Notes
Chemical mapping of a 177-nucleotide RNA with 2A3 and DMS. Source: RMDB library OK2TST, as collected in RNAgym. The DMS profile rests on 17,084 reads.
RNA sequence: GGGAACGACUCGAGUAGAGUCGAAAAUGCCUAUUCAAUUAGGUACGGCUGAUUUCAUGGUACAUCAUAUUCAUGCUUUUACAAUUCAUGUUACUGUUUUAAUUUUACUAAAAGGUGUAUUAUAUGCGAUCAUAUUAGGUUUCGACCUAAUAUGAUCAAAAGAAACAACAACAACAAC
Reactivity to 2A3 in 0.01 (KOAc 150mM, MgCl2 10mM, bicine 150mM(pH8.5), 24C), signal-to-noise 9, nucleotides 027 to 126: u060g010c010c000u020a030u040u160c100a170a300u080u020a040g030g000u030a060c050g110g000c050u080g080a150u060u080u110c060a030u070g030g000u020a020c000a010u020c010a010u030a080u180u080c020a010u050g040c020u040u070u090u100a070c070a060a110u040u090c010a010u070g030u070u050a060c040u020g060u070u040u040u080a050a100u050u110u090u130a070c040u070a030a070a080a060g000g000u020g010u010a010u060u060a120u020a040u130g060c040
Reactivity to DMS in 0.01 (KOAc 150mM, MgCl2 10mM, bicine 150mM(pH8.5), 24C), signal-to-noise 9, nucleotides 027 to 126: u000g010c000c000u000a030u000u010c240a100a100u010u000a020g000g020u000a050c150g010g010c070u010g000a100u000u010u000c090a090u000g010g010u000a030c030a020u000c030a080u000a090u000u000c030a030u000g010c160u010u000u000u010a100c180a090a070u000u000c030a030u000g000u000u000a080c150u000g010u010u010u000u000a030a090u010u010u010u010a080c070u000a040a050a090a080g000g020u000g000u000a030u000u000a070u010a110u010g010c280